[RMDB]
RNA sequence: GGGAACGACUCGAGUAGAGUCGAAAAGAUAUGGAAACUAUCUUCUUGGAUUUAUGGGAAAUGUCGGAAACGACUAUCCCAUUGUCAGAAGUUAGUUUCCUAAGUCAAAGGGACCUUCGGGUCCCAACGUAUAUUUCGCGUUCGCGCGAAAUAUACGAAAAGAAACAACAACAACAAC
Reactivity to DMS in 0.01 (KOAc 150mM, MgCl2 10mM, bicine 150mM(pH8.5), 24C), signal-to-noise 1, nucleotides 027 to 126: g040a050u010a300u000g000g000a020a000a000c000u000a010u000c000u000u000c000u010u000g040g000a020u020u010u020a000u000g020g010g010a010a090a180u000g000u000c000g020g000a060a130a280c000g020a010c000u010a300u000c000c000c000a000u000u000g000u000c020a020g000a000a010g020u000u000a010g000u000u000u000c010c000u000a000a060g000u000c050a100a140a120g000g020g010a010c000c000u000u000c210g050g000g010u000c000c010c000a010a020
Reactivity to 2A3 in 0.01 (KOAc 150mM, MgCl2 10mM, bicine 150mM(pH8.5), 24C), signal-to-noise 1, nucleotides 027 to 126: g040a000u080a040u160g000g000a000a000a000c000u010a010u070c000u040u000c000u090u260g190g020a150u300u300u070a010u080g000g000g040a050a160a080u210g010u020c010g010g020a080a100a100c040g030a010c010u000a020u060c010c000c000a000u000u000g000u000c010a000g000a000a000g000u010u010a000g010u000u000u000c000c000u000a050a000g010u010c020a050a120a140g030g000g010a010c040c000u090u090c300g120g060g000u000c000c000c000a000a000

Chemical mapping of a 177-nucleotide RNA with DMS and 2A3. It was measured as part of the RMDB library TTRDEL. Reactivities are given for positions 27 through 126. Conditions: 150 mM KOAc, 10 mM MgCl2 and 150 mM bicine (pH 8.5), 24 C. For 2A3 the reverse transcriptase was SuperScript II with manganese.